This 207-nucleotide RNA was probed chemically with 2A3. Source: RMDB library OK3TST, as collected in RNAgym. The RNA was probed in 150 mM KOAc, 10 mM MgCl2 and 150 mM bicine (pH 8.5) at 24 C. Reactivities are given for positions 27 through 156.
RNA sequence: GGGAACGACUCGAGUAGAGUCGAAAAAAUGGACCAGAUCAGGAUUUGAGCGGAAGAACGAAUGUAACUUUAAGGCAGGAAAGACAAAUUUUAUUCUUCAUAAAGUGAUGAGCAUAUAAUAAUUCCAGGCACAUGGCAAUAGAGGCCCUCUAAAUAAGUCGCUAAAUAAUUUCGAUUAUUUAGCGACAAAAGAAACAACAACAACAAC
Reactivity to 2A3 in 0.01 (KOAc 150mM, MgCl2 10mM, bicine 150mM(pH8.5), 24C), signal-to-noise 2, nucleotides 027 to 156: a010a000u110g000g030a050c020c010a050g030a080u030c030a010g110g000a050u050u070u120g030a060g000c090g020g040a020a020g020a050a020c010g010a050a000u060g010u040a100a000c040u110u120u020a040a020g040g030c030a000g060g030a020a150a000g010a010c030a040a050a030u010u150u030u090a060u090u080c030u080u020c000a040u090a220a080a060g030u040g030a030u020g040a010g010c060a000u080a000u050a160a020u070a030a090u080u020c030c030a000g030g000c020a010c010a040u020g010g000c020a000a040u010a160g030a030g030g000c000c010c000u030c000u000a030a030a030u110a090a020